[RMDB]
RNA sequence: GGGAACGACUCGAGUAGAGUCGAAAAGAUAUGGAGCUGUUCUAGCGCCAGAAGGACCAGGCUAUAUGGUCGGAAACGACCAUAAAUGCCUGGUCCUUCUGGAACUACGCUAGACAGCUCCUAAGUCCUCAUAUGAAAGGUUCGCCUUUCAUAUGAGAAAAGAAACAACAACAACAAC
Reactivity to DMS in 0.01 (KOAc 150mM, MgCl2 10mM, bicine 150mM(pH8.5), 24C), signal-to-noise 2, nucleotides 027 to 126: g010a150u010a300u020g000g010a020g020c000u000g000u000u010c000u000a000g000c000g030c020c010a000g000a070a020g010g040a030c000c000a020g010g000c000u000a300u000a010u000g000g000u020c000g000g000a080a130a300c000g000a030c000c010a000u000a000a020a130u010g000c010c020u000g000g000u000c000c000u000u000c000u010g010g000a080a040c120u020a260c040g010c020u000a000g010a010c020a000g000c010u000c000c000u000a000a110g000u010c040
This 177-nucleotide RNA was probed chemically with DMS. The DMS profile rests on 2,633 reads. For DMS the reverse transcriptase was MarathonRT. The reactions ran in a buffer of 150 mM KOAc, 10 mM MgCl2 and 150 mM bicine (pH 8.5), at 24 C.